[RMDB]
RNA sequence: GGGAACGACUCGAGUAGAGUCGAAAACAGAAGAUGGACGCAAUCAUCAAGGGUGUAUCCACUGGCGUUGUGCCUGCUGACAUCGGCAAGAUGAUGGCUGACAUUAUCAAGUCUGGCCUUGACAUUCAGGAAAUCACCGAACUCGCCGCGCGCCUUGGUAGAAGGUAUGGUUCGCCAUACCUUCUACAAAAGAAACAACAACAACAAC
Reactivity to DMS in 0.01 (KOAc 150mM, MgCl2 10mM, bicine 150mM(pH8.5), 24C), signal-to-noise 3, nucleotides 027 to 156: c090a120g010a110a140g010a090u000g000g000a140c100g040c040a050a060u000c050a110u000c100a090a230g000g000g020u010g020u000a090u010c020c040a060c030u010g010g010c030g050u010u010g040u000g020c050c010u000g000c060u000g020a100c050a070u000c030g040g020c090a110a260g000a050u000g010a040u000g010g010c020u000g010a140c140a060u000u000a080u010c060a060a080g010u000c030u000g030g010c120c020u010u010g000a050c050a130u000u000c050a040g020g000a060a120a080u000c010a090c010c000g000a050a060c050u000c030g000c040c010g030c040g030c050g000c010c030u000u020g040
Reactivity to 2A3 in 0.01 (KOAc 150mM, MgCl2 10mM, bicine 150mM(pH8.5), 24C), signal-to-noise 6, nucleotides 027 to 156: c030a010g110a100a020g050a100u040g000g020a020c040g010c080a030a090u040c020a020u060c070a110a090g130g000g010u040g020u060a100u080c050c010a040c060u040g020g000c020g060u110u160g070u230g080c020c000u040g010c060u070g010a040c000a070u050c020g050g010c080a060a060g020a020u040g000a000u020g040g000c010u050g010a010c000a030u090u170a130u210c100a080a050g040u000c060u080g060g020c010c020u050u080g020a060c030a090u080u090c020a050g000g100a050a060a050u110c030a070c050c030g010a030a020c020u020c080g010c000c000g000c000g020c000g020c000c000u040u070g040